Description: The record gives the reactivity of an RNA of 177 nucleotides to 2A3. For 2A3 the reverse transcriptase was SuperScript II with manganese. Values cover nucleotides 27 to 126. The data come from the RNA Mapping Database (RMDB), library OK1LIB. The RNA was probed in 150 mM KOAc, 10 mM MgCl2 and 150 mM bicine (pH 8.5) at 24 C.
RNA sequence: GGGAACGACUCGAGUAGAGUCGAAAAAUUCGGAUCUGGAUUUGAACGUGAAUCGAUUGUGUAUGGACCGCAUGAGAUGGUGUCGAUGCGCUGUCUACCAUGCAAAGUCGAUGGAUCAGAUCUGGAGACCCGGUGACCAUUUCGAUGGUCACCGGGUAAAAGAAACAACAACAACAAC
Reactivity to 2A3 in 0.01 (KOAc 150mM, MgCl2 10mM, bicine 150mM(pH8.5), 24C), signal-to-noise 2, nucleotides 027 to 126: a000u100u130c020g040g010a020u000c000u040g150g000a040u040u070u100g100a190a090c110g110u150g150a170a000u000c000g000a000u000u010g050u010g000u000a060u040g070g090a170c150c000g100c160a120u180g090a020g000a170u100g050g110u080g010u180c210g060a060u210g050c030g000c010u040g050u110c000u020a050c000c000a000u000g010c000a000a010a000g000u000c000g020a000u030g010g020a010u050c000a000g010a000u000c000u000g030g000a000g000